[RMDB]
RNA sequence: GGGAACGACUCGAGUAGAGUCGAAAACACUCAUUUGACGUUAAUGAAGUAAUCAAGGAUUUUCCGAUAUUAGAUCAAAAAGUCAAUGGCAAACGUUUAGCAUAUCUUGAUUCAACAGCGACAAGUCCCUCCCCGCUAUGUUCGCAUAGCGGGGAGGAAAAGAAACAACAACAACAAC
Reactivity to 2A3 in 0.01 (KOAc 150mM, MgCl2 10mM, bicine 150mM(pH8.5), 24C), signal-to-noise 2, nucleotides 027 to 126: c030a020c030u030c020a080u030u030u130g000a020c030g000u040u040a030a000u120g060a000a080g090u190a060a130u040c040a120a090g030g050a040u070u070u050u060c130c100g000a050u040a290u160u090a010g100a160u030c150a000a250a000a040a000g030u020c000a030a000u010g050g000c300a130a000a070c260g040u040u090u170a060g060c010a050u030a040u170c030u060u000g000a000u110u000c000a060a060c000a050g000c000g000a000c040a060a040g140u190c000
The record gives the reactivity of an RNA of 177 nucleotides to 2A3. Source: RMDB library OK1LIB, as collected in RNAgym. Reactivities are rounded to 0.1 and cut off at 0 and 3.